An RNA of 177 nucleotides, treated with DMS and 2A3 and read out base by base. Values cover nucleotides 27 to 126. For DMS the reverse transcriptase was MarathonRT. The data come from the RNA Mapping Database (RMDB), library OK1LIB. The RNA was probed in 150 mM KOAc, 10 mM MgCl2 and 150 mM bicine (pH 8.5) at 24 C.

RNA sequence: GGGAACGACUCGAGUAGAGUCGAAAAGUGCGGAGUGAAAUUCAUAGGAGCCUCGCCAAUAUGGCUGAACGCCGCGGUACUCCGCGUAGUCGCGACGUAAACGUUCUGUGGUCGCGUUCAGGCCUCACGAUUACGAGGUCUUCGGACCUCGUAAUCGAAAAGAAACAACAACAACAAC
Reactivity to DMS in 0.01 (KOAc 150mM, MgCl2 10mM, bicine 150mM(pH8.5), 24C), signal-to-noise 2, nucleotides 027 to 126: g010u030g050c050g000g000a070g020u000g020a070a070a070u000u000c080a070u010a210g020g000a140g030c030c000u010c090g030c010c000a060a110u020a120u030g000g020c010u000g030a050a070c020g000c020c000g040c150g000g000u000a070c120u020c000c020g060c050g070u030a070g010u000c010g000c000g020a020c030g000u020a000a120a250c040g080u000u000c010u040g020u020g000g050u030c040g000c030g010u020u040c120a040g000g000c000c000u060c110a210
Reactivity to 2A3 in 0.01 (KOAc 150mM, MgCl2 10mM, bicine 150mM(pH8.5), 24C), signal-to-noise 2, nucleotides 027 to 126: g080u090g000c010g020g040a010g000u060g050a040a100a170u300u230c190a110u110a210g060g050a030g000c000c010u020c030g000c000c000a110a020u130a120u220g010g000c010u070g000a050a020c030g010c020c000g000c000g010g000u060a010c010u000c000c000g000c050g000u020a010g090u070c010g010c000g010a020c020g060u180a120a140a000c070g020u120u080c120u200g020u050g050g050u050c050g000c010g000u050u120c010a000g000g120c010c000u020c010a010